[RMDB]
RNA sequence: GGGAACGACUCGAGUAGAGUCGAAAAUGCUUGCAGAGAAAUCGAUUAGCAAAGUCUCUUUGACUGGUAUUGCGUUUGCUGUAAAUCGUCCGGAAUUCGCGAUUAGUGCAUCUGAUGGAAGAGUCUAUAAUCGACGUCAGUUCGCUGACGUCGAUUAAAAAGAAACAACAACAACAAC
Reactivity to DMS in 0.01 (KOAc 150mM, MgCl2 10mM, bicine 150mM(pH8.5), 24C), signal-to-noise 2, nucleotides 027 to 126: u000g030c050u000u010g020c190a060g000a090g000a090a050a060u000c060g030a120u010u000a080g020c060a070a110a070g000u000c030u010c110u020u000u020g000a030c050u010g000g000u000a070u000u020g000c080g010u000u000u020g010c040u000g010u010a050a040a090u010c080g010u000c070c030g060g030a120a100u000u010c070g020c010g010a060u000u000a070g010u000g020c040a030u000c010u010g000a070u000g020g010a060a110g000a050g010u010c060u000a120
Chemical mapping of a 177-nucleotide RNA with DMS. It was measured as part of the RMDB library OK2TST. The RNA was probed in 150 mM KOAc, 10 mM MgCl2 and 150 mM bicine (pH 8.5) at 24 C. The DMS profile rests on 1,436 reads. Values cover nucleotides 27 to 126.